[RMDB]
RNA sequence: GGGAACGACUCGAGUAGAGUCGAAAAGGUUGGUUCCGAGGGGGGUGUGACUCAGGUACCGCCGUAGAAACUGAGUUACGACGUCUACCCGGAAUUCAAUCCCGUCCCCUCCAGAAGCGAUUCUGGAAGAUAAGUCUGUGCUUAGCACACUGAUGAGCCUUAUUCUUAACUUCGGUUAAGAAUAAGGAAAAGAAACAACAACAACAAC
Reactivity to 2A3 in 0.01 (KOAc 150mM, MgCl2 10mM, bicine 150mM(pH8.5), 24C), signal-to-noise 4, nucleotides 027 to 156: g000g000u010u010g000g010u010u000c000c010g020a300g010g010g010g010g000g030u000g000u010g010a010c000u000c000a020g060g020u100a120c040c080g140c100c130g050u110a050g130a050a300a020c010u000g000a000g000u010u010a060c220g050a030c050g270u030c020u110a300c020c000c030g000g020a010a020u190u280c010a000a020u050c000c020c000g030u010c000c000c000c000u000c000c000a000g000a010a010g010c020g070a050u020u000c000u000g060g000a030a000g000a030u140a030a050g050u000c130u110g010u010g010c070u110u180a070g010c040a010c010a020c110u140g080a150u060g080a040g000
Reactivity to DMS in 0.01 (KOAc 150mM, MgCl2 10mM, bicine 150mM(pH8.5), 24C), signal-to-noise 1, nucleotides 027 to 156: g000g030u010u010g020g040u000u000c000c040g000a100g000g000g030g000g040g000u000g000u010g000a030c020u000c000a000g040g010u000a280c120c030g020c070c300g000u010a110g010a150a150a130c020u000g000a060g000u000u010a030c030g010a050c030g010u000c010u000a150c000c010c010g030g000a040a030u010u000c010a030a070u000c010c080c030g030u000c000c010c010c020u000c010c000a000g010a080a080g000c300g000a300u000u010c000u000g020g020a110a060g000a170u010a110a250g000u000c030u000g050u010g020c000u030u010a260g010c100a050c030a070c010u030g050a060u020g000a100g000

Structure probing data (2A3 and DMS) for a 207-nucleotide construct. Reactivities are given for positions 27 through 156. The 2A3 profile rests on 2,630 reads. DMS (dimethyl sulfate) methylates the pairing face of unpaired adenines and cytosines. The RNA was probed in 150 mM KOAc, 10 mM MgCl2 and 150 mM bicine (pH 8.5) at 24 C. 2A3 adducts were read by reverse transcription with SuperScript II with manganese.